[RMDB]
RNA sequence: GGGAACGACUCGAGUAGAGUCGAAAAGGGUCUUCGGACCCCUACGGCCGUAGGGUCGCGAUAAGAUACCACUUCGUUUGACGAUCCUUCGAAAGAGGGAUCCGAGAAGGGUAUCUUUUGACGCGACCCUAAACGGAUAAAGGCAGUUCGCUGCCAACUUGGACAAUUAGUUCGCUAAUUGUCCAAGAAAAGAAACAACAACAACAAC
Reactivity to DMS in 0.01 (KOAc 150mM, MgCl2 10mM, bicine 150mM(pH8.5), 24C), signal-to-noise 2, nucleotides 027 to 156: g000g030g020u000c000u000u010c270g080g030a020c020c000c010c030u000a010c050g000g020c000c000g060u010a050g000g030g010u000c010g020c000g020a190u000a040a030g020a030u000a020c010c000a200c020u000u000c020g000u000u000u010g030a120c140g020a010u000c000c010u000u000c000g010a120a170a300g010a010g000g010g000a000u000c000c000g000a120g000a050a030g030g010g000u000a000u000c000u000u000u020u040g030a220c080g000c000g000a020c000c000c020u020a010a020a050c010g020g000a270u020a020a080a130g010g020c030a040g020u000u000c170g010c000u000g000c000c000a020a140
Reactivity to 2A3 in 0.01 (KOAc 150mM, MgCl2 10mM, bicine 150mM(pH8.5), 24C), signal-to-noise 3, nucleotides 027 to 156: g020g000g030u040c040u050u120c250g140g000a000c000c000c010c010u040a040c020g130g010c010c000g020u010a010g000g000g000u000c000g000c000g000a040u030a070a000g000a000u000a000c000c000a300c180u010u000c020g150u010u180u300g040a050c050g000a000u000c020c000u000u000c040g060a130a070a030g000a020g000g010g000a000u000c000c000g030a030g000a000a000g010g000g000u000a000u010c000u000u020u010u040g050a040c010g010c000g000a000c000c000c000u000a000a000a000c000g000g010a020u270a090a160a050g020g000c000a010g010u130u140c190g040c140u040g000c000c010a010a050

Structure probing data (DMS and 2A3) for a 207-nucleotide construct. The DMS profile rests on 3,141 reads. High 2A3 reactivity points to a flexible backbone, as in loops and unpaired stretches. For DMS the reverse transcriptase was MarathonRT. The RNA was probed in 150 mM KOAc, 10 mM MgCl2 and 150 mM bicine (pH 8.5) at 24 C. For 2A3, 1,828 sequencing reads were counted. Source: RMDB library RNAMAK, as collected in RNAgym.